Source information
This 207-nucleotide RNA was probed chemically with DMS and 2A3. The 2A3 profile rests on 974 reads. For 2A3 the reverse transcriptase was SuperScript II with manganese. The RNA was probed in 150 mM KOAc, 10 mM MgCl2 and 150 mM bicine (pH 8.5) at 24 C.
RNA sequence: GGGAACGACUCGAGUAGAGUCGAAAAUACAAAGGUGGAAUUUGCAUCAACUGUUCAAGGUCUUUAACGCUGGCUUGCAAGCAGUCUGUUAGACCCAGAGAAUAAAUCCCCUGCAAUAUUGCUUCUUCAUAAAAUGAUUUUACAGUUGAUCCUGGCACAUUACUCCAGUGUUCGCACUGGAGUAAUGAAAAGAAACAACAACAACAAC
Reactivity to DMS in 0.01 (KOAc 150mM, MgCl2 10mM, bicine 150mM(pH8.5), 24C), signal-to-noise 2, nucleotides 027 to 156: u010a110c040a050a050a050g010g000u000g010g010a100a060u000u020u000g070c050a080u000c000a030a050c060u000g020u000u010c050a140a060g060g030u000c040u000u000u000a060a050c050g050c010u010g000g000c020u000u020g010c090a110a120g030c020a030g020u010c050u000g030u000u010a080g010a080c000c020c040a200g010a220g020a060a140u000a070a060a190u010c000c020c010c090u010g070c020a140a150u000a050u000u010g010c000u000u010c030u020u020c070a070u000a080a050a110a170u010g010a110u000u000u010u020a130c040a050g030u000u020g020a110u000c030c040u000g000g000c090a140
Reactivity to 2A3 in 0.01 (KOAc 150mM, MgCl2 10mM, bicine 150mM(pH8.5), 24C), signal-to-noise 3, nucleotides 027 to 156: u190a030c080a060a130a010g020g000u120g010g100a160a130u120u090u120g050c040a020u020c000a020a070c030u020g060u050u060c100a060a130g010g010u010c030u040u180u120a030a010c010g010c050u040g150g060c030u130u230g040c050a040a090g030c010a020g040u050c110u300g000u060u010a000g010a000c000c000c030a030g050a000g040a080a070u130a120a110a030u050c000c000c000c000u000g040c050a070a080u100a120u250u070g020c010u040u070c000u050u030c030a040u180a160a090a090a110u100g040a050u010u120u070u160a050c010a010g010u030u030g020a010u040c030c040u050g070g010c140a000